This 177-nucleotide RNA was probed chemically with DMS and 2A3. The data come from the RNA Mapping Database (RMDB), library M2PK90. For DMS, 5,884 sequencing reads were counted. The 2A3 profile rests on 4,064 reads.
RNA sequence: GGGAACGACUCGAGUAGAGUCGAAAAGUCAAGAUGUGUAGGAUAGGUGGGAGGCUUUGAAGUGUGGACGCCAGUCUCCAUGGAGCCGACCUUGAAAUACCACCCUUUAAUGGAAAAACAAAGUGAAGAUACUAACAUCGUUCGCGAUGUUAGUAUCAAAAGAAACAACAACAACAAC
Reactivity to DMS in 0.01 (KOAc 150mM, MgCl2 10mM, bicine 150mM(pH8.5), 24C), signal-to-noise 6, nucleotides 027 to 126: g000u000c050a090a200g010a040u000g000u000g010u000a020g010g000a080u000a020g000g010u000g000g000g020a110g030g010c030u000u000u010g000a100a140g010u000g000u000g010g000a020c010g000c100c180a090g000u000c010u000c190c010a010u000g000g000a020g020c010c000g020a090c300c050u000u000g000a060a050a080u000a080c010c010a020c010c000c030u000u000u010a070a130u010g010g010a040a050a050a080a100c150a050a070a110g020u010g000a120a110
Reactivity to 2A3 in 0.01 (KOAc 150mM, MgCl2 10mM, bicine 150mM(pH8.5), 24C), signal-to-noise 3, nucleotides 027 to 126: g090u070c060a040a020g030a070u050g030u010g030u060a020g050g080a040u010a030g040g000u000g000g040g020a120g020g000c000u220u200u040g020a060a020g000u020g000u020g030g000a010c000g020c050c020a010g000u010c010u000c000c000a000u020g000g010a000g000c000c000g010a030c020c000u000u030g030a010a010a000u020a010c000c010a030c000c010c010u070u060u080a180a140u170g060g020a140a070a000a020a030c100a040a110a040g080u130g130a090a060